[RMDB]
RNA sequence: GGGAACGACUCGAGUAGAGUCGAAAAGAUAUGGACCACUCUAAGGGAGCCUCUCGGAAACGAGGGAGGGCGAAGAACUUAGAGGUGGUCCUAAGUCAAAAGCAUUAGGUCUUCGGACCUAAUGCAACGUAAAUACCAACUUCGGUUGGUAUUUACGAAAAGAAACAACAACAACAAC
Reactivity to 2A3 in 0.01 (KOAc 150mM, MgCl2 10mM, bicine 150mM(pH8.5), 24C), signal-to-noise 5, nucleotides 027 to 126: g010a000u050a050u150g000g000a000c000c000a010c010u010c010u010a010a030g060g030g000a010g020c030c010u130c000u010c030g050g060a140a080a060c030g050a030g240g300g080a220g110g010g010c010g290a300a030g020a040a030c010u020u010a010g020a060g060g050u040g000g000u000c000c000u000a030a010g020u010c040a030a010a070a120g000c000a000u000u010a000g000g000u000c010u040u080c300g090g010a000c000c000u000a000a000u000g010c000a000a000
Reactivity to DMS in 0.01 (KOAc 150mM, MgCl2 10mM, bicine 150mM(pH8.5), 24C), signal-to-noise 4, nucleotides 027 to 126: g010a060u000a300u010g010g000a030c000c020a040c000u000c010u000a010a010g000g000g010a130g000c000c000u000c000u000c010g000g010a130a070a170c030g010a010g000g000g020a130g010g000g010c000g010a070a100g000a130a150c000u000u000a010g000a020g010g020u000g040g000u000c000c000u000a000a070g010u000c050a090a080a090a120g000c000a010u000u000a010g010g000u000c000u000u010c200g040g000a010c000c000u010a000a000u000g000c000a020a030
The data come from the RNA Mapping Database (RMDB), library TTRDEL. Chemical mapping of a 177-nucleotide RNA with 2A3 and DMS. 2A3 adducts were read by reverse transcription with SuperScript II with manganese. Conditions: 150 mM KOAc, 10 mM MgCl2 and 150 mM bicine (pH 8.5), 24 C. The DMS profile rests on 5,737 reads. 2A3 is a SHAPE reagent: it acylates the 2'-hydroxyl of flexible nucleotides of all four kinds.